[RMDB]
RNA sequence: GGGAACGACUCGAGUAGAGUCGAAAAGGUGGCUCGAACGCACCAGCGAAGAGAGGACUCAACGAGUCACCGAUUUAGCAUGUUCGUCCUUUUCCCCGGGGGCCGAUUAUUUUGGACGUUCAUGCGAGGGAUCGUGAUCGUUCGCGAUUACGAUCCCAAAAGAAACAACAACAACAAC
Reactivity to DMS in 0.01 (KOAc 150mM, MgCl2 10mM, bicine 150mM(pH8.5), 24C), signal-to-noise 4, nucleotides 027 to 126: g010g010u000g010g000c000u000c000g000a070a190c060g010c010a240c050c110a290g030c020g000a180a070g000a070g000a240g010g000a110c040u010c020a090a230c000g000a020g010u000c000a030c000c000g000a060u020u030u050a080g010c000a000u000g000u000u000c000g000u000c000c000u000u030u010u020c000c000c000c130g000g000g000g010g030c030c070g020a090u030u020a060u020u020u010u010g000g000a000c000g000u000u000c000a010u000g010c000g010a170
Reactivity to 2A3 in 0.01 (KOAc 150mM, MgCl2 10mM, bicine 150mM(pH8.5), 24C), signal-to-noise 9, nucleotides 027 to 126: g000g000u000g010g010c000u000c000g030a090a030c030g010c020a080c030c030a030g030c010g090a270a070g070a020g030a090g070g200a180c040u030c050a020a010c020g000a000g000u000c000a000c000c000g000a000u060u060u140a010g000c000a000u000g010u000u000c000g000u000c000c010u050u010u060u070c000c000c000c010g050g000g000g050g030c020c020g060a070u070u070a130u060u240u080u100g000g000a000c010g000u010u000c000a000u000g010c010g000a090
The record gives the reactivity of an RNA of 177 nucleotides to DMS and 2A3. For DMS the reverse transcriptase was MarathonRT. The RNA was probed in 150 mM KOAc, 10 mM MgCl2 and 150 mM bicine (pH 8.5) at 24 C. The DMS profile rests on 7,238 reads. 2A3 is a SHAPE reagent: it acylates the 2'-hydroxyl of flexible nucleotides of all four kinds. For 2A3, 13,528 sequencing reads were counted. Source: RMDB library OK1LIB, as collected in RNAgym.